An RNA of 177 nucleotides, treated with DMS and read out base by base. For DMS, 3,147 sequencing reads were counted.
[RMDB]
RNA sequence: GGGAACGACUCGAGUAGAGUCGAAAAAGGUGCGGUGUAGCAGCUGAAGGCUGGUGUGCGUUGGUCUGUUUUUUGUUUUUUGGUUUUUUUCCCUCCCUGCAGAUCCAUGCCCUACCUAAUGCAGGCACAAAUCCCUUCGAUUCGUCGAAGGGAUUUGAAAAGAAACAACAACAACAAC
Reactivity to DMS in 0.01 (KOAc 150mM, MgCl2 10mM, bicine 150mM(pH8.5), 24C), signal-to-noise 1, nucleotides 027 to 126: a060g000g000u000g020c050g010g000u010g030u000a110g010c050a110g020c040u010g000a200a050g010g010c090u000g010g000u000g010u010g020c060g030u000u010g010g010u010c020u000g010u000u000u010u000u010u000g010u000u010u000u000u000u000g010g000u000u000u000u000u000u000u000c010c000c020u000c070c000c000u000g000c030a020g000a060u010c040c060a030u010g000c020c010c030u000a060c040c040u000a060a140u000g020c050a070g000g000c190a140